[RMDB]
RNA sequence: GGGAACGACUCGAGUAGAGUCGAAAAGAUUAGGCAGAUAACAACUAUUACGCGUCUUGCCACUGUAUUGUAAAGUUAACAACAAGAUAUAAGUUUAAUACACCUACGCGACAAGAUGAAUCAGCAAGCGUAACGUAUCAUUCGUGAUACGUUACGCAAAAGAAACAACAACAACAAC
Reactivity to 2A3 in 0.01 (KOAc 150mM, MgCl2 10mM, bicine 150mM(pH8.5), 24C), signal-to-noise 2, nucleotides 027 to 126: g050a030u110u240a060g080g030c020a020g110a170u040a080a060c020a030a000c020u070a070u140u090a030c100g010c000g040u010c020u050u070g000c000c010a030c020u060g040u020a030u120u040g110u140a030a060a140g080u080u130a050a060c040a000a020c020a030a040g050a090u080a020u020a220a040g000u000u100u040a060a030u010a000c020a040c030c020u010a020c000g010c000g050a020c030a000a000g030a100u070g030a060a000u070c010a010g030c000a020a020
Reactivity to DMS in 0.01 (KOAc 150mM, MgCl2 10mM, bicine 150mM(pH8.5), 24C), signal-to-noise 2, nucleotides 027 to 126: g000a110u010u000a070g010g030c020a060g010a110u000a040a120c140a110a100c060u000a080u000u000a110c060g000c040g000u010c010u000u000g010c020c030a060c070u000g020u000a020u010u020g000u010a040a020a110g040u000u000a020a030c130a060a020c090a010a070g020a100u010a120u010a020a070g010u000u020u000a020a070u000a040c070a030c130c070u000a050c060g010c070g010a030c030a040a050g010a010u000g010a020a060u000c060a110g060c110a080a070